[RMDB]
Overview
This 207-nucleotide RNA was probed chemically with 2A3.
RNA sequence: GGGAACGACUCGAGUAGAGUCGAAAAACGAGGUACGCCUCGAAAAUGUGACCGGUGUCAUAGCCUCUAGCACACAGAGGUCGCGUGGGUUCAACUCCCCCCCUUUUCCGAGGGUAUCGGAAACCAAAAAACACAAUUUGGUUCGCCAAAUUGUGAACCGGAUUAUAGGGUUCGCCCUAUAAUCCGGAAAAGAAACAACAACAACAAC
Reactivity to 2A3 in 0.01 (KOAc 150mM, MgCl2 10mM, bicine 150mM(pH8.5), 24C), signal-to-noise 1, nucleotides 027 to 156: a000c000g000a000g010g010u050a030c090g060c000c010u000c010g010a020a060a000a020u160g000u020g000a020c030c040g090g040u030g090u110c100a080u090a050g020c050c020u110c020u020a110g050c100a020c000a000c010a080g090a050g060g010u020c000g000c000g060u110g060g000g010u070u180c040a020a050c040u070c020c000c000c000c000c000c060u040u000u040u000c000c000g010a000g000g000g040u040a030u000c020g000g000a000a000a000c010c010a060a000a050a000a050a000c000a000c000a000a010u010u000u000g010g000u020u030c040g000c060c000a000a000a000u000u000g000u000g000a030a030
Conditions: 150 mM KOAc, 10 mM MgCl2 and 150 mM bicine (pH 8.5), 24 C.
The data come from the RNA Mapping Database (RMDB), library M2RFPK.